[RMDB]
RNA sequence: GGGAACGACUCGAGUAGAGUCGAAAAGAUAUGGACAUUCAUUUGAUUCAUCGAUCUCGGAAACGAGGGAGAAUCUGAUGAGAUGUCCUAAGUCAAACAUUUAUUGAUGUUCGCAUCAAUAAAUGAAUCAAAAAGAACGGUUCGCCGUUCUUUUUGAAAAAGAAACAACAACAACAAC
Reactivity to DMS in 0.01 (KOAc 150mM, MgCl2 10mM, bicine 150mM(pH8.5), 24C), signal-to-noise 3, nucleotides 027 to 126: g000a030u000a300u000g010g000a020c000a010u000u000c000a010u000u000u000g010a020u000u000c000a270u000c210g010a030u010c000u000c000g000g010a160a090a160c010g010a030g000g000g000a030g000a040a000u000c000u000g010a000u000g000a040g000a030u000g020u000c000c000u000a030a100g010u000c040a110a100a290c010a000u000u000u000a010u000u010g010a010u000g010u010u030c230g040c000a000u000c000a020a010u000a000a030a010u000g000a090a090
Reactivity to 2A3 in 0.01 (KOAc 150mM, MgCl2 10mM, bicine 150mM(pH8.5), 24C), signal-to-noise 2, nucleotides 027 to 126: g030a020u060a050u130g020g010a010c010a010u030u000c000a000u000u030u060g010a000u020u030c020a160u300c170g070a090u010c010u000c000g010g090a130a140a100c020g000a010g020g000g010a040g000a010a000u000c010u030g000a010u010g040a150g030a200u000g010u010c000c010u000a090a030g030u080c030a160a020a070c020a050u020u000u020a000u000u020g010a020u000g020u060u060c300g040c130a000u000c010a020a010u000a000a000a000u000g030a010a120